[RMDB]
RNA sequence: GGGAACGACUCGAGUAGAGUCGAAAAGAUAUGGAAUGUAGGGAGAAACCAAUCGGAAACGAUUGGUUUCAUCGAUCUAUUUUCCUAAGUCAAAAUCGGUUAUUAAACUUCGGUUUAAUAACCGAAAGAUAUUAAUUUGCUUCGGCAAAUUAAUAUCAAAAGAAACAACAACAACAAC
Reactivity to DMS in 0.01 (KOAc 150mM, MgCl2 10mM, bicine 150mM(pH8.5), 24C), signal-to-noise 1, nucleotides 027 to 126: g010a020u000a060u010g000g000a040a000u010g000u000a000g000g000g000a030g030a010a000a010c000c000a000a000u000c000g020g000a000a030a020c000g000a000u000u000g000g000u000u000u000c000a100u000c200g010a140u010c000u000a010u000u000u000u000c000c000u000a020a100g000u000c000a090a060a200a130u010c000g020g000u010u000a010u010u000a000a010a010c000u000u020c210g000g010u000u010u000a010a000u000a000a010c000c010g000a000a010a080

About this RNA:
The record gives the reactivity of an RNA of 177 nucleotides to DMS. Conditions: 150 mM KOAc, 10 mM MgCl2 and 150 mM bicine (pH 8.5), 24 C. Source: RMDB library TTRDEL, as collected in RNAgym.